[RMDB]
RNA sequence: GGGAACGACUCGAGUAGAGUCGAAAAAGUCGGAAUCCGCUAAGGAGUGUGUAACAACUCACGGGCCGAAUGAACUAGCCCUGAAAAUGGAUGGCGCUCAAGCGUGCUACCCAUACCUCGCCGUCGGUGUAACCGGCCUUUUCGAAGGCCGGUUACAAAAAGAAACAACAACAACAAC
Reactivity to 2A3 in 0.01 (KOAc 150mM, MgCl2 10mM, bicine 150mM(pH8.5), 24C), signal-to-noise 2, nucleotides 027 to 126: a000g010u000c020g010g010a110a040u060c000c010g000c040u080a040a050g150g000a000g000u020g060u020g060u100a050a100c060a060a000c050u010c030a000c010g000g000g000c000c020g020a040a110u130g000a110a050c030u010a010g040c000c000c000u030g090a100a030a030a040u080g040g010a000u000g000g000c020g000c050u000c120a120a070g020c020g040u000g150c020u000a050c000c020c000a050u030a090c000c000u020c000g000c000c010g040u040c070g000g080
Reactivity to DMS in 0.01 (KOAc 150mM, MgCl2 10mM, bicine 150mM(pH8.5), 24C), signal-to-noise 2, nucleotides 027 to 126: a070g030u000c000g000g000a080a060u000c000c000g000c300u020a050a110g000g040a130g000u050g040u090g020u060a090a120c040a060a100c050u000c060a150c060g000g000g040c000c030g010a060a060u000g000a090a170c070u000a130g000c000c000c000u000g000a050a010a020a020u000g000g000a060u000g000g000c000g010c070u010c100a160a050g000c170g000u000g010c070u000a050c010c030c020a120u000a070c060c020u000c040g030c070c000g030u030c090g040g000